[RMDB]
RNA sequence: GGGAACGACUCGAGUAGAGUCGAAAACUCAUGGCAGGGCCGAGGGAAGCUCCCCGCAGCAGCCCCAGCCCUAGGCCAGGUUCUGAUCCCAGAGGGGAGCUGGGCAGGAGGCUCUCUCUGGCAGCUCGCCUGCCCUGGGUUCCAGGUCUCCAAGCCAAAUUAGUCGAUUAUUCGUAAUCGACUAAUUAAAAGAAACAACAACAACAAC
Reactivity to 2A3 in 0.01 (KOAc 150mM, MgCl2 10mM, bicine 150mM(pH8.5), 24C), signal-to-noise 2, nucleotides 027 to 156: c020u040c010a090u030g010g000c000a010g020g010g000c010c040g090a170g060g020g010a000a040g000c010u020c030c150c020c060g050c170a030g000c020a040g000c020c010c010c000a010g020c000c020c020u070a090g060g020c010c000a010g030g000u070u040c020u090g060a090u070c000c000c000a020g060a060g020g020g000g000a020g010c010u020g000g020g080c030a040g020g050a020g080g000c010u020c000u020c020u050c050u190g070g020c070a010g000c020u090c090g170c020c010u020g020c010c000c000u010g050g000g000u020u020c020c020a010g000g030u000c060u030c080c040a050a060g040c050c010a010
Reactivity to DMS in 0.01 (KOAc 150mM, MgCl2 10mM, bicine 150mM(pH8.5), 24C), signal-to-noise 2, nucleotides 027 to 156: c030u010c050a220u020g010g040c020a170g000g010g040c010c020g000a170g000g000g000a150a220g010c020u000c020c080c070c100g060c110a060g000c050a150g000c160c000c010c000a070g010c000c000c020u000a040g000g000c010c020a080g020g030u010u010c050u000g000a130u010c000c000c000a150g020a120g010g000g020g000a040g030c030u010g060g000g060c030a100g030g020a160g050g030c030u010c060u000c070u000c070u000g030g030c040a050g000c040u000c070g010c020c010u000g020c000c000c020u020g000g000g010u000u020c020c050a090g020g010u000c030u020c040c060a030a130g000c060c040a080